[RMDB]
Description: Conditions: 150 mM KOAc, 10 mM MgCl2 and 150 mM bicine (pH 8.5), 24 C. Chemical mapping of a 177-nucleotide RNA with 2A3 and DMS. Values are in units of 0.01, from 0 to 300, in steps of 10. 2A3 adducts were read by reverse transcription with SuperScript II with manganese. For DMS the reverse transcriptase was MarathonRT. The DMS profile rests on 2,163 reads.
RNA sequence: GGGAACGACUCGAGUAGAGUCGAAAACACUACGGAUCUUGGAAAGUAUCAUCAUAUGCAAGAUCGUGAUGAUAUGCAGAGUGAACAGCAAGAACGUGAAAUGCGUCGUCGUCUCAAUGCUGCAUUAUAGCUGCUACUAGUUCGCUAGUAGCAGCUAAAAAGAAACAACAACAACAAC
Reactivity to 2A3 in 0.01 (KOAc 150mM, MgCl2 10mM, bicine 150mM(pH8.5), 24C), signal-to-noise 3, nucleotides 027 to 126: c000a000c030u190a030c050g150g010a110u010c020u090u020g020g170a260a020a050g080u110a060u070c030a020u030c000a000u070a090u170g150c060a050a070g000a220u070c030g000u000g010a100u040g000a000u000a000u080g000c000a000g070a030g130u050g070a130a020c000a030g040c030a030a090g020a120a000c020g020u040g130a170a120a080u220g000c000g000u010c020g090u070c000g040u020c010u000c060a030a040u080g040c000u000g000c000a020u090u030a080
Reactivity to DMS in 0.01 (KOAc 150mM, MgCl2 10mM, bicine 150mM(pH8.5), 24C), signal-to-noise 2, nucleotides 027 to 126: c090a110c080u010a030c070g020g010a040u000c030u010u000g000g010a090a150a110g000u010a030u000c070a050u000c020a050u010a060u000g000c090a090a070g000a040u000c070g000u010g020a030u000g000a030u000a010u000g000c100a100g000a120g020u010g000a100a050c090a080g000c000a060a040g020a050a030c000g000u000g020a060a080a080u010g010c010g020u000c020g000u010c080g000u000c080u000c030a020a070u040g010c030u010g000c010a060u010u010a130